Source: RMDB library TTRINS, as collected in RNAgym. The record gives the reactivity of an RNA of 177 nucleotides to 2A3 and DMS. The RNA was probed in 150 mM KOAc, 10 mM MgCl2 and 150 mM bicine (pH 8.5) at 24 C. The 2A3 profile rests on 2,301 reads.
[RMDB]
RNA sequence: GGGAACGACUCGAGUAGAGUCGAAAAGAUAUGGACUUCUUGAUCUUACCGUGUAAGACGUUUGACGUCGCUCGGAAACGAGCGACCGAGUCUUACACGGUAACGAUCAUCAGAGAAGUCCUAAGUCCCUUGCUAAUACCUUCGGGUAUUAGCAAGGAAAAGAAACAACAACAACAAC
Reactivity to 2A3 in 0.01 (KOAc 150mM, MgCl2 10mM, bicine 150mM(pH8.5), 24C), signal-to-noise 1, nucleotides 027 to 126: g050a000u170a110u300g000g000a020c000u000u000c010u030u280g000a010u000c010u000u030a010c000c030g040u000g000u010a010a000g010a020c030g150u090u300u300g140a100c090g020u030c010g000c030u000c010g040g050a060a180a140c000g000a000g010c020g000a000c000c000g040a030g000u040c000u010u010a000c000a000c000g000g000u000a000a000c000g000a010u000c030a030u000c030a000g040a010g000a160a000g000u000c000c000u000a070a010g060u000c030
Reactivity to DMS in 0.01 (KOAc 150mM, MgCl2 10mM, bicine 150mM(pH8.5), 24C), signal-to-noise 2, nucleotides 027 to 126: g000a100u040a280u000g010g010a060c000u000u000c000u000u010g010a010u000c010u000u000a000c000c000g010u000g010u020a000a010g000a020c010g000u000u000u010g010a220c300g000u000c000g010c000u000c000g000g000a040a120a240c030g010a010g000c000g020a010c000c010g010a040g000u000c000u000u000a000c020a000c010g000g020u010a000a000c170g000a020u000c030a150u000c290a210g030a050g040a010a010g010u000c000c000u000a040a130g000u010c080